[RMDB]
RNA sequence: GGGAACGACUCGAGUAGAGUCGAAAACGCUGGGUAGACGCCGGUCUUUCGCAUGUCUCUAGCGUGAGCUCUGAAGCGCGCACGGAGCUUCGGGCAUGAACUACGAAAGGAUUUCGUCUACCUGUGCUGAAGCGCGCACGGCAACCGAAAGGUGCGAGAACUCGGACUUCUUCGGAAGUCCGAGUUCAAAAGAAACAACAACAACAAC
Reactivity to 2A3 in 0.01 (KOAc 150mM, MgCl2 10mM, bicine 150mM(pH8.5), 24C), signal-to-noise 1, nucleotides 027 to 156: c040g000c020u040g000g000g000u000a000g000a040c030g040c160c080g190g180u070c030u000u000u040c060g020c060a010u000g020u000c040u020c030u300a140g130c020g210u200g020a000g010c010u030c000u030g060a240a030g020c000g000c000g000c020a020c010g000g000a020g010c020u090u060c080g010g000g000c000a000u010g030a070a050c100u240a050c280g030a060a000a020g040g020a010u130u230u270c040g000u020c000u000a000c000c000u000g000u000g000c010u020g020a160a040g000c020g000c000g000c000a020c000g020g040c020a010a020c020c000g040a130a010a000g000g010u020g020c000g010a060